[RMDB]
RNA sequence: GGGAACGACUCGAGUAGAGUCGAAAAGAAAGAAAGAAAGAAAUGUAUGAAGUCCUAUUCACGCGCGAUAGGAUAAACUUCAUACAGAUCGUGUAUGUGCUAACGCACAUACACGAAUGCGCAUGCAGAACUGCAUGCAUGAACAUAGCGCGUGCAAGCAUUACUGGUGCUUCGGCACCAGUAAUGCAAAAGAAACAACAACAACAAC
Reactivity to 2A3 in 0.01 (KOAc 150mM, MgCl2 10mM, bicine 150mM(pH8.5), 24C), signal-to-noise 1, nucleotides 027 to 156: g080a000a040a020g060a060a040a020g030a010a050a000g070a010a110a050u010g000u010a000u000g000a000a000g000u000c000c000u010a010u010u020c110a010c040g000c010g020c000g000a000u000a000g000g020a000u090a070a070a000c000u000u000c000a000u000a000c010a000g020a020u000c000g000u000g000u000a000u010g000u010g000c080u190a140a050c070g000c040a000c000a000u000a000c000a000c000g000a030a030u040g010c020g010c000a000u000g000c000a010g060a250a030c170u080g000c000a000u000g000c000a010u070g000a010a020c080a100u070a030g000c000g000c000g000u010g000c030a020a040
Structure probing data (2A3) for a 207-nucleotide construct. 2A3 adducts were read by reverse transcription with SuperScript II with manganese. Values are in units of 0.01, from 0 to 300, in steps of 10. Reactivities are given for positions 27 through 156. The data come from the RNA Mapping Database (RMDB), library OK3TST.